[RMDB]
RNA sequence: GGGAACGACUCGAGUAGAGUCGAAAAACCAUGUGUUCCACCGGCGUCACUGUAGGCUUCCUUCCAUGCCUACGGUUAGAUGCUUGAAUUUCUUUGGUGGCAUUCUGUCGACACAUGGAAGAUUGAUGAAUGGUAGUAAGUUCGCUUACUACCAUUCAAAAGAAACAACAACAACAAC
Reactivity to DMS in 0.01 (KOAc 150mM, MgCl2 10mM, bicine 150mM(pH8.5), 24C), signal-to-noise 4, nucleotides 027 to 126: a080c000c010a010u020g010u000g000u000u000c010c010a030c030c040g000g000c010g030u000c010a030c000u000g020u000a010g010g000c000u000u010c110c060u020u000c110c080a100u000g000c010c010u000a010c010g010g000u000u010a060g020a010u000g000c000u000u000g010a110a100u000u000u010c130u010u000u010g030g020u000g010g000c300a120u010u010c120u010g010u000c130g000a050c010a020c010a010u010g010g000a090a070g010a150u020u000g010a260u000
Reactivity to 2A3 in 0.01 (KOAc 150mM, MgCl2 10mM, bicine 150mM(pH8.5), 24C), signal-to-noise 6, nucleotides 027 to 126: a000c000c000a010u010g000u000g010u000u060c010c000a000c000c010g020g000c010g010u000c000a000c000u000g010u010a000g000g000c010u120u110c020c040u170u070c060c020a080u130g000c010c000u010a000c000g000g000u020u060a030g000a010u010g000c000u000u040g030a030a070u130u160u060c120u100u140u130g000g000u010g000g010c010a070u200u120c060u140g110u090c090g010a000c000a000c000a010u000g020g020a020a020g100a100u120u270g040a050u070